[RMDB]
RNA sequence: GGGAACGACUCGAGUAGAGUCGAAAAUCCCGAUGUCCGAUCAAUUCCCUCCCCCCGAGGGUCGCCCAGGAAUGGCGGGACCCCACUCAACUGGGGUCCGCGUUCCAUCCUUUCUUACCUGAUGGCCCAUAACAUGGCGGUUCGCCGCCAUGUUAUGAAAAGAAACAACAACAACAAC
Reactivity to DMS in 0.01 (KOAc 150mM, MgCl2 10mM, bicine 150mM(pH8.5), 24C), signal-to-noise 1, nucleotides 027 to 126: u000c000c000c000g030a080u010g020u000c050c060g000a050u000c110a090a170u000u000c030c000c010u000c020c000c000c000c010c030g020a090g010g010g000u000c010g020c050c040c010a110g010g010a060a040u000g030g020c020g020g030g020a030c000c000c020c000a010c050u000c300a090a110c200u010g020g010g010g000u000c000c000g010c010g010u000u000c020c000a070u010c060c030u000u020u010c050u000u000a130c080c060u000g000a100u000g010g010c040c030